Source: RMDB library OK1LIB, as collected in RNAgym. The record gives the reactivity of an RNA of 177 nucleotides to 2A3. For 2A3 the reverse transcriptase was SuperScript II with manganese.
RNA sequence: GGGAACGACUCGAGUAGAGUCGAAAACGCGCUGUUCAUCGGUGGUCAAUACGAUGUCGGCACCACCUGGGGAGCCGAGGCCAUAGCGCGGGCACACGAGGUCAUGUCCGACUACCGCGGCACCCACCCCUCAGGACCUCUUCGGAGGUCCUGAGGGAAAAGAAACAACAACAACAAC
Reactivity to 2A3 in 0.01 (KOAc 150mM, MgCl2 10mM, bicine 150mM(pH8.5), 24C), signal-to-noise 2, nucleotides 027 to 126: c030g060c010g000c010u000g110u300u080c020a020u000c000g100g030u080g120g240u210c050a050a000u190a170c000g020a000u030g010u070c000g000g090c030a020c030c020a080c000c100u050g000g000g000g000a020g000c000c040g000a030g020g010c060c100a070u030a010g080c300g000c010g200g000g000c000a080c000a000c000g230a120g060g000u150c150a070u030g020u000c000c020g000a020c030u000a020c000c000g040c000g030g000c000a040c000c030c000a030c030
Values cover nucleotides 27 to 126. The reactions ran in a buffer of 150 mM KOAc, 10 mM MgCl2 and 150 mM bicine (pH 8.5), at 24 C.